[RMDB]
RNA sequence: GGGAACGACUCGAGUAGAGUCGAAAAGAUAUGGAGACGGCCAGGACAUGAGCCUCGGAAACGAGUGCUCAACAGCCUGACGUCUCCUAAGUCAAAAGAUUAUAGAGUGUUCGCACUCUAUAAUCAAUCAUACACAUUGCUUCGGCAAUGUGUAUGAAAAAGAAACAACAACAACAAC
Reactivity to 2A3 in 0.01 (KOAc 150mM, MgCl2 10mM, bicine 150mM(pH8.5), 24C), signal-to-noise 2, nucleotides 027 to 126: g010a010u040a010u080g000g000a000g000a000c010g050g040c250c000a000g000g010a120c050a200u040g010a000g000c000c000u010c010g010g000a000a040a010c010g000a000g020u300g020c000u000c020a000a010c030a000g080c000c010u000g000a010c000g010u030c000u000c000c010u000a000a010g000u000c000a000a010a080a230g010a000u000u000a010u000a010g010a000g020u020g050u100u120c260g050c120a000c000u000c000u000a000u010a010a000u000c010a000a000
Reactivity to DMS in 0.01 (KOAc 150mM, MgCl2 10mM, bicine 150mM(pH8.5), 24C), signal-to-noise 4, nucleotides 027 to 126: g000a030u010a300u010g010g000a000g010a000c010g030g000c230c000a020g020g010a070c080a220u000g010a010g000c010c000u000c000g010g010a040a090a110c020g000a010g030u020g040c000u010c000a020a050c250a140g000c000c010u000g000a050c000g000u000c000u010c000c000u000a000a060g010u000c020a080a110a110a080g000a010u000u010a010u000a010g000a010g030u000g010u000u030c230g000c010a000c010u000c000u000a000u000a000a010u000c010a100a120
Structure probing data (2A3 and DMS) for a 177-nucleotide construct. For DMS, 3,400 sequencing reads were counted. Source: RMDB library TTRDEL, as collected in RNAgym.